Structure probing data (DMS and 2A3) for a 207-nucleotide construct. The 2A3 profile rests on 1,307 reads. For 2A3 the reverse transcriptase was SuperScript II with manganese. The reactions ran in a buffer of 150 mM KOAc, 10 mM MgCl2 and 150 mM bicine (pH 8.5), at 24 C. For DMS the reverse transcriptase was MarathonRT.

[RMDB]
RNA sequence: GGGAACGACUCGAGUAGAGUCGAAAAUCUGCUUCAGCCUCCCUAGUAGCUGGGAUUAUAGGUGUCUGCCACCAUGCCUGGCUAAUUUUUGUAUUUUUAGUAGAAACGGGGUUUCACCAUGUUGGCCUGGCUGGUCUUGAACUCCUGACCUCAAGUGUCUAUGUAGAUUGUUCGCAAUCUACAUAGAAAAAGAAACAACAACAACAAC
Reactivity to DMS in 0.01 (KOAc 150mM, MgCl2 10mM, bicine 150mM(pH8.5), 24C), signal-to-noise 2, nucleotides 027 to 156: u000c030u010g020c000u000u000c050a060g010c010c010u010c010c000c000u010a050g060u000a030g010c020u010g010g020g000a060u010u050a060u010a060g020g010u010g000u000c080u010g030c030c020a040c020c010a050u000g060c020c020u010g030g030c020u010a020a020u000u000u000u000u010g020u000a060u000u000u000u000u010a110g020u000a090g010a030a050a080c050g020g030g020g020u010u000u000c070a050c040c030a080u010g020u010u000g010g000c010c020u000g010g020c000u000g000g000u000c020u000u000g010a060a060c030u000c020c010u010g020a130c020c000u000c040a050a110g000u000g010
Reactivity to 2A3 in 0.01 (KOAc 150mM, MgCl2 10mM, bicine 150mM(pH8.5), 24C), signal-to-noise 2, nucleotides 027 to 156: u010c000u050g010c000u080u080c040a010g010c020c030u010c000c000c000u010a050g030u030a010g010c030u030g010g030g000a030u120u020a070u180a170g000g010u040g060u040c110u150g140c050c010a000c000c000a020u100g000c010c000u000g000g000c000u000a000a020u020u090u050u030u080g030u040a120u040u120u000u030u110a060g010u010a000g090a040a060a000c030g040g010g040g010u000u040u070c030a020c020c020a020u040g030u040u050g070g000c000c000u010g010g010c010u010g020g040u000c000u070u080g010a030a020c000u010c010c040u040g050a030c010c000u090c070a080a040g060u040g050